Annotation
The record gives the reactivity of an RNA of 177 nucleotides to DMS and 2A3. The RNA was probed in 150 mM KOAc, 10 mM MgCl2 and 150 mM bicine (pH 8.5) at 24 C. Source: RMDB library OK2TRN, as collected in RNAgym.
[RMDB]
RNA sequence: GGGAACGACUCGAGUAGAGUCGAAAAUCAUCAGCGGAUUUGUCUCAACAGUUCUACGUCGGUGACGAUAAGUACAUCUCUGAAAACACAACAGGGGGUCUCAACUCCAAUGCUCCUCCCCAAGGACACCGCAUAAGGGAUUCGUCCCUUAUGCGGUAAAAGAAACAACAACAACAAC
Reactivity to DMS in 0.01 (KOAc 150mM, MgCl2 10mM, bicine 150mM(pH8.5), 24C), signal-to-noise 2, nucleotides 027 to 126: u010c050a040u000c050a060g080c100g000g040a100u000u000u000g040u020c060u000c100a120a110c100a050g030u010u010c040u000a020c100g000u000c010g000g020u010g000a130c020g040a030u000a000a130g000u000a040c070a020u010c020u000c030u020g000a030a030a060a060c210a050c070a050a050c060a070g050g000g050g000g020u000c070u000c040a040a090c070u000c010c060a070a090u000g010c080u000c010c010u000c010c000c000c030a090a120g010g020a060c180
Reactivity to 2A3 in 0.01 (KOAc 150mM, MgCl2 10mM, bicine 150mM(pH8.5), 24C), signal-to-noise 1, nucleotides 027 to 126: u140c000a020u030c050a010g070c020g070g000a010u080u030u070g030u000c020u010c040a040a140c020a050g090u050u070c030u130a050c050g050u040c030g080g110u090g020a050c050g030a090u050a220a020g020u020a030c020a100u000c010u000c000u040g070a020a090a080a000c070a020c000a110a100c040a080g030g030g000g010g040u000c010u000c080a030a080c010u070c030c030a030a080u150g020c000u000c000c000u010c000c020c030c000a020a010g060g000a020c000